Structure probing data (DMS and 2A3) for a 177-nucleotide construct. The RNA was probed in 150 mM KOAc, 10 mM MgCl2 and 150 mM bicine (pH 8.5) at 24 C. 2A3 adducts were read by reverse transcription with SuperScript II with manganese. DMS (dimethyl sulfate) methylates the pairing face of unpaired adenines and cytosines.
[RMDB]
RNA sequence: GGGAACGACUCGAGUAGAGUCGAAAACUUACUCUUUUCUGUAAAGAGGAGACUGCUGGACUCUCCGCCCAAGCCGAGAUGGGCCUCAGUUCCGAGCGAAGAGCCGAACCGGGAAGAGGAAGCGCCCGAUACCCUUAUUGUUCGCAAUAAGGGUAUCAAAAGAAACAACAACAACAAC
Reactivity to DMS in 0.01 (KOAc 150mM, MgCl2 10mM, bicine 150mM(pH8.5), 24C), signal-to-noise 2, nucleotides 027 to 126: c030u000u000a080c010u000c000u010u000u000u010c130u020g000u010a060a060a090g010a150g000g000a050g010a060c080u010g020c110u000g020g000a140c030u000c050u000c030c170g020c010c040c090a050a140g000c070c170g010a060g000a090u000g000g000g010c030c060u000c070a020g010u000u000c030c070g000a060g040c050g010a080a110g000a160g020c020c020g010a080a080c080c070g000g000g000a020a020g010a040g000g000a110a060g000c080g010c030c020c040
Reactivity to 2A3 in 0.01 (KOAc 150mM, MgCl2 10mM, bicine 150mM(pH8.5), 24C), signal-to-noise 2, nucleotides 027 to 126: c010u020u080a100c010u010c000u040u040u060u020c050u120g080u110a070a130a080g050a110g070g000a000g070a030c030u060g070c020u050g050g030a040c010u020c000u020c030c040g030c000c050c030a110a030g030c020c010g070a070g000a060u040g030g150g020c000c000u030c010a020g000u010u020c030c020g010a030g020c030g040a090a160g030a030g140c030c030g010a020a000c010c010g000g000g010a010a040g010a000g000g000a010a000g010c020g030c020c000c000